The record gives the reactivity of an RNA of 177 nucleotides to 2A3 and DMS. Values are in units of 0.01, from 0 to 300, in steps of 10. Source: RMDB library TTRDEL, as collected in RNAgym. For 2A3 the reverse transcriptase was SuperScript II with manganese.
RNA sequence: GGGAACGACUCGAGUAGAGUCGAAAAGAUAUGGAGACCCUUGUGCGCGAGGAGGCUCGGAAACGAGCCUCUACCCACCGAACUACGCACUUGGGUCUCCUAAGUCAAACCAGGGUUCGCCCUGGAACUUGUUGUCUUAGUUCGCUAAGACAACAAGAAAAGAAACAACAACAACAAC
Reactivity to 2A3 in 0.01 (KOAc 150mM, MgCl2 10mM, bicine 150mM(pH8.5), 24C), signal-to-noise 2, nucleotides 027 to 126: g000a010u030a020u070g010g010a000g000a000c000c020c040u000u000g020u010g020c260g050c090g100a090g050g020a000g020g000c000u000c000g000g010a000a010a010c010g000a000g020c050c010u000c000u000a010c000c010c010a080c030c040g040a120a100c100u190a060c300g000c020a000c000u000u020g000g010g000u010c000u000c000c000u000a000a000g000u000c000a010a010a100c000c000a000g000g010g030u040u080c190g120c050c000c020u010g000g000a020a030
Reactivity to DMS in 0.01 (KOAc 150mM, MgCl2 10mM, bicine 150mM(pH8.5), 24C), signal-to-noise 3, nucleotides 027 to 126: g000a060u000a220u000g010g010a010g000a010c000c000c000u000u010g020u000g030c010g020c090g010a190g030g000a030g000g000c000u000c000g010g000a020a080a120c010g000a000g000c010c000u000c000u000a040c060c060c110a290c200c120g000a060a080c100u010a260c020g010c010a010c000u000u000g000g010g000u000c000u000c000c000u000a000a050g010u000c030a090a100a160c010c000a020g000g010g010u000u010c250g030c000c000c000u000g000g000a020a090